[RMDB]
RNA sequence: GGGAACGACUCGAGUAGAGUCGAAAAGCGUCGAUUUACGAGGCCGCGCAGCUUCUUGCCUCCUGAGUAAACCCAGCGGUCGAACUGGCCGGGCACCUCAUCCAGCCGGCCCUCGCGGAUCAGGCGGUCUAGAUGUCAUAUUCGUAUGACAUCUAGAAAAAGAAACAACAACAACAAC
Reactivity to DMS in 0.01 (KOAc 150mM, MgCl2 10mM, bicine 150mM(pH8.5), 24C), signal-to-noise 6, nucleotides 027 to 126: g010c030g060u000c020g000a080u010u010u030a090c060g020a070g020g010c020c000g010c090g010c050a140g000c040u000u000c050u000u010g010c020c030u010c060c030u010g000a090g020u020a050a090a140c070c050c020a140g010c060g010g010u020c040g010a060a110c120u020g000g010c030c030g010g000g030c050a090c090c020u010c070a060u020c070c040a090g000c040c010g000g010c050c020c020u010c030g000c080g000g000a040u000c040a080g010g000c030g010g020
Reactivity to 2A3 in 0.01 (KOAc 150mM, MgCl2 10mM, bicine 150mM(pH8.5), 24C), signal-to-noise 9, nucleotides 027 to 126: g050c010g020u020c020g030a040u020u030u080a070c040g010a020g020g000c010c000g050c040g000c040a030g020c030u100u060c020u110u140g020c010c010u080c010c030u060g040a050g050u140a070a140a120c020c010c010a030g070c030g020g010u040c020g010a170a100c090u100g020g000c000c000g000g010g020c030a050c020c020u050c020a080u050c040c020a010g020c010c000g020g000c040c020c010u020c010g010c060g020g010a030u020c010a090g010g020c020g000g000